[RMDB]
RNA sequence: GGGAACGACUCGAGUAGAGUCGAAAACACCUUCUUUAUGAUGCACUGGGCUGUGGUUCCCUGAGGAAGGGGUAAGAGAUAUUGCUUUUCUGAAAUUGGGCUACUACUUUGGGCACAUGCUUAUGAACCCUCAAACUAUUUUCGAAUAGUUUGAGGGAAAAGAAACAACAACAACAAC
Reactivity to 2A3 in 0.01 (KOAc 150mM, MgCl2 10mM, bicine 150mM(pH8.5), 24C), signal-to-noise 6, nucleotides 027 to 126: c060a040c010c000u050u040c030u050u180u060a150u180g090a070u090g010c030a020c090u060g030g030g010c030u050g010u020g090g000u090u100c010c000c000u010g070a060g020g050a030a010g020g040g010g010u040a060a020g070a010g040a100u050a100u170u140g070c020u060u070u050u010c020u040g090a100a120a110u070u060g010g010g000c010u040a030c000u010a020c000u090u090u080g000g000g010c020a010c010a060u070g020c010u140u070a110u190g070a050a060
Reactivity to DMS in 0.01 (KOAc 150mM, MgCl2 10mM, bicine 150mM(pH8.5), 24C), signal-to-noise 6, nucleotides 027 to 126: c130a140c060c020u000u010c050u000u010u010a060u010g000a100u000g010c040a070c060u010g000g000g020c060u000g030u000g010g010u000u000c010c020c030u010g010a130g000g010a090a040g010g000g000g020u010a060a070g020a100g010a070u000a070u010u000g000c090u000u000u010u000c050u010g000a050a070a140u000u000g010g000g000c040u000a080c070u000a060c080u000u000u010g020g000g000c030a050c070a050u000g010c080u000u010a080u010g010a120a190